An RNA of 207 nucleotides, treated with DMS and 2A3 and read out base by base. The 2A3 profile rests on 2,143 reads. For DMS the reverse transcriptase was MarathonRT. The DMS profile rests on 4,215 reads. Values cover nucleotides 27 to 156. The RNA was probed in 150 mM KOAc, 10 mM MgCl2 and 150 mM bicine (pH 8.5) at 24 C.

[RMDB]
RNA sequence: GGGAACGACUCGAGUAGAGUCGAAAACUUGAAGAGACAGGUAAGAAUACUAGUUAGUAGGGCUGUGCUUUCUGUGUUAAAUGUCUUCUGGGGAGGCCCAGAUGCCUCACAAGUUCAGAACUUGACUGGGAGAAGCGGGAAAAUGGAGAAAUAGGGAUAUUUAAUGGAUCUUCGGAUCCAUUAAAUAAAAAGAAACAACAACAACAAC
Reactivity to DMS in 0.01 (KOAc 150mM, MgCl2 10mM, bicine 150mM(pH8.5), 24C), signal-to-noise 2, nucleotides 027 to 156: c050u000u010g030a100a140g000a110g010a100c040a020g010g020u000a070a120g010a120a120u000a050c040u010a070g010u010u000a080g040u000a050g030g030g040c030u010g040u000g000c020u000u000u010c040u000g020u000g020u030u010a050a090a100u000g000u000c010u000u000c020u030g000g000g030g030a080g010g000c000c020c050a110g000a080u000g000c000c010u000c020a110c040a030a060g030u000u000c100a120g010a070a090c030u010u000g010a070c060u010g000g000g010a140g000a050a090g010c040g000g010g000a020a050a040a120u000g010g000a110g030a030a050a080u010a090g010g010g020a150
Reactivity to 2A3 in 0.01 (KOAc 150mM, MgCl2 10mM, bicine 150mM(pH8.5), 24C), signal-to-noise 3, nucleotides 027 to 156: c030u040u110g040a050a030g020a020g030a050c020a030g050g030u130a100a020g030a130a040u090a160c040u050a030g090u150u040a030g030u030a030g000g040g010c030u010g000u070g030c000u000u070u020c030u010g040u000g060u120u110a080a200a110u100g020u010c040u040u030c030u110g000g010g020g010a040g050g000c010c000c000a020g020a060u080g010c000c000u040c000a030c010a040a010g020u100u120c040a020g010a110a040c020u070u080g060a070c040u060g010g000g000a060g030a040a010g010c080g010g030g020a030a050a060a060u100g010g020a040g020a020a090a040u120a040g020g020g010a020